Structure probing data (2A3) for a 207-nucleotide construct. For 2A3 the reverse transcriptase was SuperScript II with manganese. Reactivities are given for positions 27 through 156. It was measured as part of the RMDB library OK3TST. The reactions ran in a buffer of 150 mM KOAc, 10 mM MgCl2 and 150 mM bicine (pH 8.5), at 24 C.
RNA sequence: GGGAACGACUCGAGUAGAGUCGAAAACGGGGAACUUCCGGACCACCUCAGCGGCCUUGCGGCCCAGCCAGUGCAGCGCGCCCUUCUUGGCGUACUUGCCGCGUUCCUUGCUGUCGUGGAAGCCCAGCUUGACGCACCAGUUGCGGAAGCACUGCCGCCAGCUAAUAGUCUUCGGACUAUUAGCUGGAAAAGAAACAACAACAACAAC
Reactivity to 2A3 in 0.01 (KOAc 150mM, MgCl2 10mM, bicine 150mM(pH8.5), 24C), signal-to-noise 1, nucleotides 027 to 156: c030g000g000g030g070a100a280c050u250u040c040c030g070g020a100c040c020a040c010c020u060c040a010g050c040g010g000c030c010u130u300g020c050g000g000c000c040c000a030g010c000c000a140g040u110g080c030a010g050c010g020c010g000c070c030c020u160u210c150u140u300g000g000c020g010u040a080c050u070u090g020c050c010g020c000g000u100u060c030c000u060u200g000c000u020g050u080c040g030u010g000g010a030a020g020c010c010c030a000g010c000u000u080g100a190c000g000c020a070c100c040a140g050u250u050g060c030g000g030a010a000g020c000a000c070u060g050c040c020g030